The record gives the reactivity of an RNA of 177 nucleotides to DMS and 2A3. DMS adducts were read by reverse transcription with MarathonRT.
RNA sequence: GGGAACGACUCGAGUAGAGUCGAAAAGCACUCCUUUUCGAAGGAGUGCCCAGGCGCGCGGCCUUUGUCCUGUCGCGUGUGCGCCGCGCGCGAUAUACCCGCAUCUGUGCAUAUUCGUAUGCACAAACUGCUCUACAGAUUUCGAUCUGUAGAGCAGAAAAGAAACAACAACAACAAC
Reactivity to DMS in 0.01 (KOAc 150mM, MgCl2 10mM, bicine 150mM(pH8.5), 24C), signal-to-noise 2, nucleotides 027 to 126: g010c010a010c000u000c000c000u000u000u000u000c120g010a030a010g010g010a020g040u010g000c010c020c090a090g020g000c010g010c010g030c010g020g000c010c040u010u010u000g010u010c040c080u000g000u010c090g010c020g010u010g000u000g030c110g030c010c000g020c000g010c010g020c000g010a020u000a070u000a140c010c010c000g000c160a110u020c150u000g010u010g000c010a030u000a020u000u000c190g000u000a000u000g010c000a000c000a030a030a130
Reactivity to 2A3 in 0.01 (KOAc 150mM, MgCl2 10mM, bicine 150mM(pH8.5), 24C), signal-to-noise 3, nucleotides 027 to 126: g000c010a010c000u020c000c030u060u050u010u100c210g130a020a010g010g000a010g000u000g000c000c020c000a040g000g080c010g000c000g010c000g020g020c000c020u080u110u250g100u060c040c050u140g140u270c090g020c050g050u060g080u040g030c090g010c000c000g000c000g020c020g010c020g000a000u020a000u020a060c010c020c000g000c040a090u090c080u110g000u000g000c040a000u010a010u040u060c190g090u040a000u020g000c000a010c010a010a000a000
The DMS profile rests on 2,292 reads. The RNA was probed in 150 mM KOAc, 10 mM MgCl2 and 150 mM bicine (pH 8.5) at 24 C.